Conditions: 150 mM KOAc, 10 mM MgCl2 and 150 mM bicine (pH 8.5), 24 C.
Chemical mapping of a 177-nucleotide RNA with DMS.
It was measured as part of the RMDB library TTRINS.
For DMS the reverse transcriptase was MarathonRT.

[RMDB]
RNA sequence: GGGAACGACUCGAGUAGAGUCGAAAAGAUAUGGAGUCAGCAGAGGGUGCUGGUAUCGACGUUGAUCUUCUUCGGAAACGAAGAAGGGAGUCGGUUACCAGCACCCGACGAAGCUGACUCCUAAGUCCACUAGAUGGUAGUUCGCUACCAUCUAGUGAAAAGAAACAACAACAACAAC
Reactivity to DMS in 0.01 (KOAc 150mM, MgCl2 10mM, bicine 150mM(pH8.5), 24C), signal-to-noise 2, nucleotides 027 to 126: g020a090u000a300u010g020g010a010g020u000c000a000g070c020a060g000a140g020g000g010u000g000c000u000g000g000u000a010u000c020g000a030c000g000u000u020g010a040u000c000u000u000c010u000u000c000g020g000a160a140a280c000g020a020a000g010a030a010g010g000g010a010g010u000c000g010g000u010u000a010c010c010a000g020c000a000c020c000c000g000a010c200g020a120a120g000c000u010g000a000c010u000c000c000u000a010a090g010u010c040